[RMDB]
RNA sequence: GGGAACGACUCGAGUAGAGUCGAAAAGAGCGUCGAGAGACGAAGAGAAGUGCACCGAUCAGCAAAGGGGAACGUAAUGGUGCACAAGAGUAAGUCAGUGUAACGUUCUCAGGGCACUGGAGGCAGAGCUAUGCCUAGGCUUCGGCCUAGGCAUAGCAAAAGAAACAACAACAACAAC
Reactivity to DMS in 0.01 (KOAc 150mM, MgCl2 10mM, bicine 150mM(pH8.5), 24C), signal-to-noise 2, nucleotides 027 to 126: g000a150g000c010g010u010c070g000a170g000a290g000a030c060g000a050a020g000a030g020a120a080g000u000g000c000a030c000c020g000a090u060c190a060g000c190a060a050a160g010g000g010g020a060a040c060g010u030a160a110u020g030g020u000g000c000a000c010a090a060g000a050g020u000a100a130g050u040c000a110g000u070g020u030a090a030c110g010u020u010c000u000c020a140g020g040g000c040a040c010u000g000g020a060g040g040c060a020g000a150
Reactivity to 2A3 in 0.01 (KOAc 150mM, MgCl2 10mM, bicine 150mM(pH8.5), 24C), signal-to-noise 2, nucleotides 027 to 126: g100a020g000c000g000u020c020g010a010g000a000g000a040c070g010a180a000g090a020g010a150a000g000u000g030c020a070c030c000g030a180u110c060a000g100c010a020a040a100g070g020g000g000a020a020c000g000u100a070a070u220g030g000u000g000c000a000c000a000a030g030a030g050u120a140a100g050u100c100a070g010u030g050u050a070a060c000g020u050u000c030u000c000a010g020g000g000c000a000c070u030g040g000a050g080g000c060a030g020a010
Source information
Structure probing data (DMS and 2A3) for a 177-nucleotide construct. Reactivities are given for positions 27 through 126. The reactions ran in a buffer of 150 mM KOAc, 10 mM MgCl2 and 150 mM bicine (pH 8.5), at 24 C. DMS adducts were read by reverse transcription with MarathonRT.